[RMDB]
RNA sequence: GGGAACGACUCGAGUAGAGUCGAAAAGGGCGCUAUACCACAGCCGUUGAUGAGCAUGGCCGUUCUUAGGUGUAAGCCCUGCCGGUUGUCUUGAUAGACAAAAUUUUACCGAGACUUGUAAUAGCCACAUUCGGUUAUGGUUCGCCAUAACCGAAUGAAAAGAAACAACAACAACAAC
Reactivity to 2A3 in 0.01 (KOAc 150mM, MgCl2 10mM, bicine 150mM(pH8.5), 24C), signal-to-noise 1, nucleotides 027 to 126: g000g000g060c020g000c090u010a040u010a030c000c010a030c030a040g000c020c000g000u020u130g070a300u070g080a030g150c070a020u050g000g000c020c000g070u100u010c040u090u160a060g000g000u000g010u030a000a000g000c000c000c020u030g020c000c020g070g030u030u050g000u000c000u030u140g080a090u160a110g000a010c000a000a170a010a020u130u130u070u040a000c010c010g070a090g010a070c020u020u120g080u070a030a140u040a210g030c030c000a030
Reactivity to DMS in 0.01 (KOAc 150mM, MgCl2 10mM, bicine 150mM(pH8.5), 24C), signal-to-noise 3, nucleotides 027 to 126: g030g010g020c010g030c170u000a030u000a000c020c020a180c070a030g010c010c000g040u000u000g030a210u020g010a200g020c080a060u000g010g020c020c030g020u000u000c240u010u010a080g010g030u000g000u000a020a160g020c000c010c000u000g010c270c000g020g000u010u000g000u000c020u000u010g010a140u010a080g000a020c070a030a020a140a190u000u000u010u010a050c040c040g010a080g000a080c060u010u000g010u000a100a070u010a080g000c060c060a200